Conditions: 150 mM KOAc, 10 mM MgCl2 and 150 mM bicine (pH 8.5), 24 C. Chemical mapping of a 177-nucleotide RNA with DMS and 2A3. The data come from the RNA Mapping Database (RMDB), library OK2TST. The 2A3 profile rests on 1,834 reads.

RNA sequence: GGGAACGACUCGAGUAGAGUCGAAAAAAUAAAGAUAUAUGGAGAAGACAAUGCAUUUACCAAAUUUUGACUGAUCGAUUCGCCCUUGAUGAUCAUUGUACCACUGCUCCAUCGACUGGUAGAAUGAGUAUCGAUAAAUCUUCGGAUUUAUCGAUACAAAAGAAACAACAACAACAAC
Reactivity to DMS in 0.01 (KOAc 150mM, MgCl2 10mM, bicine 150mM(pH8.5), 24C), signal-to-noise 3, nucleotides 027 to 126: a030a070u010a030a050a110g000a120u000a090u020a080u000g010g010a110g010a130a110g010a100c070a080a090u010g010c080a030u000u000u010a080c060c050a030a100a130u000u000u000u000g000a050c040u000g000a100u000c030g010a080u000u000c030g010c010c020c030u030u020g010a090u000g010a070u000c010a030u000u000g010u010a040c030c020a070c100u000g010c060u000c030c100a070u000c070g000a060c120u000g000g020u010a030g010a030a030u000g030a150
Reactivity to 2A3 in 0.01 (KOAc 150mM, MgCl2 10mM, bicine 150mM(pH8.5), 24C), signal-to-noise 2, nucleotides 027 to 126: a020a020u230a000a110a020g070a030u090a010u020a030u130g020g010a100g020a190a040g090a040c070a100a070u090g030c010a060u000u050u140a090c020c040a040a100a130u080u060u050u030g050a030c030u050g030a070u010c010g040a060u070u010c020g010c010c010c000u010u130g070a110u060g020a030u070c020a020u010u050g080u030a010c010c010a030c050u050g030c000u000c020c020a040u080c030g080a100c030u020g010g030u030a040g060a060a010u040g010a030
Reactivities are given for positions 27 through 126.